[RMDB]
RNA sequence: GGGAACGACUCGAGUAGAGUCGAAAAGUAGAUGCAUUGCUGGAUAACGGCCGUCGUGGUCGUGCGAUUACCGGCUCUAACAAGCGUCCGUUGAAGUCACUGGCUGACAUGAUCAAAGGUAAGCAAGCAGGGGCAAUCCAUUCGUGGAUUGCCCCUGAAAAGAAACAACAACAACAAC
Reactivity to DMS in 0.01 (KOAc 150mM, MgCl2 10mM, bicine 150mM(pH8.5), 24C), signal-to-noise 1, nucleotides 027 to 126: g050u010a080g020a150u000g010c010a080u000u000g030c000u000g000g110a130u010a140a110c000g040g010c020c030g010u010c300g030u000g000g030u000c080g020u000g000c190g020a110u010u010a040c080c000g010g010c000u010c050u050a050a010c150a050a070g000c030g040u000c010c010g060u010u000g020a040a170g010u000c030a070c060u000g000g030c090u000g000a060c060a050u030g000a060u000c090a020a200a080g000g000u000a090a140g010c030a110a150g010